[RMDB]
RNA sequence: GGGAACGACUCGAGUAGAGUCGAAAACGCCUCGUCGCCCGCGUCGAUGGACCGGGUCUGCUCGGCGAGCUGCUUGAACGGGCGUACCGCGAACGCGGCCAACAGCCAGGCGAACACCGCCGCCGCGGAAGCUCAGUUGGUUCGCCAACUGAGCUUCAAAAGAAACAACAACAACAAC
Reactivity to 2A3 in 0.01 (KOAc 150mM, MgCl2 10mM, bicine 150mM(pH8.5), 24C), signal-to-noise 1, nucleotides 027 to 126: c000g000c030c060u140c060g090u040c010g030c010c010c000g040c090g040u000c030g080a260u300g200g000a040c070c050g020g000g000u000c040u040g000c040u030c040g240g010c060g000a020g000c030u090g000c040u090u190g080a190a040c040g040g030g000c020g000u000a080c000c030g060c030g080a090a030c020g010c000g000g040c000c030a150a110c050a030g000c050c030a030g010g010c000g060a100a040c090a080c160c050g000c000c000g000c030c010g000c000g000
Reactivity to DMS in 0.01 (KOAc 150mM, MgCl2 10mM, bicine 150mM(pH8.5), 24C), signal-to-noise 2, nucleotides 027 to 126: c070g010c040c000u000c070g040u000c050g040c010c010c000g000c220g000u000c000g010a170u000g000g000a000c040c030g010g000g020u080c090u000g010c000u000c030g020g020c060g000a070g000c040u000g010c130u010u000g010a130a120c000g010g020g010c050g000u000a150c020c000g030c060g000a180a300c160g020c020g000g030c020c140a050a070c110a060g000c040c080a120g000g020c030g020a120a120c150a090c050c000g010c010c000g070c080c020g000c030g020

Annotation
Structure probing data (2A3 and DMS) for a 177-nucleotide construct. It was measured as part of the RMDB library OK2TRN. The DMS profile rests on 997 reads.